Description
This 177-nucleotide RNA was probed chemically with DMS and 2A3.
RNA sequence: GGGAACGACUCGAGUAGAGUCGAAAAUCACGGCGACAACAGCAGUCGAUGGGGUAGCACCCGUGGGUGAACAGGUGCUGCGGGAACUGGGCCAGCAACGCACCGAGCAUCUGCUGGUGGCCGGUUCUGAACAUGAACUCUUCGGAGUUCAUGUUCAAAAAGAAACAACAACAACAAC
Reactivity to DMS in 0.01 (KOAc 150mM, MgCl2 10mM, bicine 150mM(pH8.5), 24C), signal-to-noise 3, nucleotides 027 to 126: u000c050a130c060g000g020c020g010a050c110a090a100c090a080g020c090a070g010u000c050g020a090u000g010g000g000g020u000a070g030c050a080c010c000c030g050u000g030g010g030u010g000a110a080c050a080g000g020u000g010c010u010g020c030g030g020g000a030a040c030u000g000g020g000c000c000a030g010c010a060a090c190g000c070a160c130c110g000a160g010c050a100u010c130u000g010c010u000g000g010u000g030g010c010c000g020g030u000u000c020
Reactivity to 2A3 in 0.01 (KOAc 150mM, MgCl2 10mM, bicine 150mM(pH8.5), 24C), signal-to-noise 2, nucleotides 027 to 126: u110c020a030c080g020g020c030g130a060c030a200a010c030a100g100c010a000g060u040c030g070a040u100g020g000g060g000u030a000g000c030a020c010c000c030g020u060g030g130g060u200g090a100a010c020a060g000g020u000g000c010u010g010c050g030g070g000a020a030c030u100g040g010g050c000c000a010g010c000a010a070c050g000c010a040c100c120g020a050g030c030a040u070c050u100g010c010u010g000g000u000g090g070c000c000g000g020u010u030c030
Values cover nucleotides 27 to 126. The RNA was probed in 150 mM KOAc, 10 mM MgCl2 and 150 mM bicine (pH 8.5) at 24 C. For DMS the reverse transcriptase was MarathonRT.